[RMDB]
RNA sequence: GGGAACGACUCGAGUAGAGUCGAAAAACUGCAUCUACGCAUGCAGAACUACGUUCAUCCAAUUUAUUUGGACGCAUGAAAUGAGAAUAGGGAACGGGAUUCUCAUACGCAGGCUACGGCCUGCGAAAAAACUCCUUAUGCUUCGGCAUAAGGAGAAGUGUGUCUUCUUGUUCGCAAGAAGACACACAAAAGAAACAACAACAACAAC
Reactivity to 2A3 in 0.01 (KOAc 150mM, MgCl2 10mM, bicine 150mM(pH8.5), 24C), signal-to-noise 2, nucleotides 027 to 156: a000c000u000g040c010a010u000c030u200a080c120g060c030a010u010g000c000a000g010a030a030c080u080a050c030g030u020u010c000a010u000c010c000a070a030u080u170u190a210u230u050u050g000g020a000c010g020c030a050u150g070a090a050a100u020g010a000g000a000a000u070a080g020g010g000a010a000c010g010g010g000a000u010u010c000u010c000a010u020a030c050g000c000a000g000g000c010u030a050c250g060g000c000c030u000g050c000g020a000a000a000a000a000a000c010u010c000c000u000u000a000u010g010c010u020u030c090g090g010c010a000u000a010a000g000g000a000g000a000a010